[RMDB]
RNA sequence: GGGAACGACUCGAGUAGAGUCGAAAAUGUUUGGUUGCUGCUGACCAACAUGUCACUGAGUGUAAGAUUCUGAGAGAAAGGGCACAGCAUGUCUUGCAUGCUGCUGGAGUACAAGGAAAGCAUGCAGAGAGUUUAUAUUCUUCGGAAUAUAAACUCUAAAAGAAACAACAACAACAAC
Reactivity to DMS in 0.01 (KOAc 150mM, MgCl2 10mM, bicine 150mM(pH8.5), 24C), signal-to-noise 9, nucleotides 027 to 126: u000g010u000u000u010g020g010u000u000g020c080u000g020c090u000g000a040c020c010a030a030c030a030u000g010u010c070a100c060u000g010a090g020u010g000u010a090a090g010a120u000u000c040u000g010a120g010a090g000a050a070a080g010g000g020c060a110c020a040g000c020a090u000g010u000c130u010u010g010c010a020u000g000c000u000g000c050u000g010g010a110g020u010a080c150a080a130g010g000a060a060a070g010c020a010u000g010c020a090g000
Reactivity to 2A3 in 0.01 (KOAc 150mM, MgCl2 10mM, bicine 150mM(pH8.5), 24C), signal-to-noise 6, nucleotides 027 to 126: u050g040u020u030u110g040g010u030u030g040c070u040g010c030u050g020a030c000c000a010a010c020a020u060g050u040c020a020c110u060g050a030g090u060g030u070a090a030g020a190u110u030c040u080g050a040g010a010g010a110a070a020g040g010g010c030a010c000a030g000c010a020u070g030u040c070u060u160g000c000a010u010g010c000u010g000c010u010g030g030a070g030u060a050c040a080a010g030g020a080a080a020g010c010a020u080g000c010a000g010